RNA sequence: GGGAACGACUCGAGUAGAGUCGAAAACAUGCGCGUCCGAAGUAUGGGAAGCAUAAGUGGUCACACCGCCUUCCGCUCUUAUCAUUGUAUCUCGAAUACUAAAUCUGUGGUUUGAGCCUAGGCGCGGUCUACUGAGGCUGUUCGCGGCUUCGGUAGAAAAAGAAACAACAACAACAAC
Reactivity to DMS in 0.01 (KOAc 150mM, MgCl2 10mM, bicine 150mM(pH8.5), 24C), signal-to-noise 9, nucleotides 027 to 126: c080a070u020g010c040g010c040g010u020c010c030g000a100a100g010u020a080u050g000g000g010a040a060g010c070a070u020a090a100g010u010g000g000u040c200a100c070a170c100c040g000c070c010u000u000c060c170g000c000u000c010u000u000a020u000c020a020u000u010g000u010a010u010c040u030c180g010a120a050u010a040c060u010a050a090a070u030c170u030g010u000g000g000u000u000u000g000a030g020c020c050u000a110g000g000c020g010c040g000g000
Reactivity to 2A3 in 0.01 (KOAc 150mM, MgCl2 10mM, bicine 150mM(pH8.5), 24C), signal-to-noise 9, nucleotides 027 to 126: c040a030u110g010c020g000c010g060u030c010c020g060a060a010g030u080a070u180g070g000g010a020a010g010c020a050u060a170a050g040u040g050g090u250c060a050c010a010c140c010g020c010c000u020u000c010c010g000c000u000c000u000u010a010u010c010a010u010u070g020u060a030u010c080u030c090g120a160a030u070a080c030u060a040a040a090u060c040u050g010u010g000g000u000u000u010g000a000g000c000c010u010a010g000g000c000g000c000g000g010
Overview
An RNA of 177 nucleotides, treated with DMS and 2A3 and read out base by base. Values cover nucleotides 27 to 126. For 2A3, 68,711 sequencing reads were counted. For DMS the reverse transcriptase was MarathonRT. The reactions ran in a buffer of 150 mM KOAc, 10 mM MgCl2 and 150 mM bicine (pH 8.5), at 24 C. It was measured as part of the RMDB library OK1LIB.